[RMDB]
RNA sequence: GGGAACGACUCGAGUAGAGUCGAAAAAAACUUUGGUGACUUGCUGAAACGGGACUAAUCUCCUCACCGAGGCUAAGCAAGUAAAAUACGCCUCUCAUAUCCUUACCUGAGGGUGGUAAGGAAAUAACCUGCAACGCUUCCUUCGGGAAGCGUUGAAACCUCUAUUUACGUUCGCGUAAAUAGAGGUAAAAGAAACAACAACAACAAC
Reactivity to 2A3 in 0.01 (KOAc 150mM, MgCl2 10mM, bicine 150mM(pH8.5), 24C), signal-to-noise 3, nucleotides 027 to 156: a000a000a000c070u130u070u100g000g010u030g010a030c000u030u010g000c010u030g030a040a080a050c040g010g010g000a010c040u120a090a080u060c040u030c040c010u020c030a040c040c050g010a020g010g020c050u060a030a020g000c010a030a030g030u140a070a020a020a030u100a020c060g000c000c000u050c000u010c020a030u030a040u190c000c000u000u000a000c000c000u050g080a130g030g050g020u020g000g000u000a000a000g000g000a000a010a010u020a000a050c010c020u050g010c010a010a000c000g000c010u000u010c000c000u000u040c100g010g010g000a000a000g000c000g000u000u000g000a000a000
Reactivity to DMS in 0.01 (KOAc 150mM, MgCl2 10mM, bicine 150mM(pH8.5), 24C), signal-to-noise 1, nucleotides 027 to 156: a050a080a010c030u000u000u010g020g040u000g000a060c040u000u000g000c030u000g040a080a030a100c090g000g020g020a080c040u020a110a050u000c030u010c020c000u010c040a070c030c020g000a080g050g010c020u010a150a090g010c040a050a050g020u000a060a060a020a100u010a090c110g030c020c030u000c020u000c040a130u000a090u000c010c040u010u000a000c020c010u020g000a180g020g030g020u000g010g000u000a000a020g000g010a010a020a070u000a060a090c050c030u000g010c020a040a020c000g030c000u010u000c010c000u000u000c300g030g030g010a020a010g000c000g010u000u000g000a000a050

An RNA of 207 nucleotides, treated with 2A3 and DMS and read out base by base. For 2A3 the reverse transcriptase was SuperScript II with manganese. For 2A3, 3,522 sequencing reads were counted.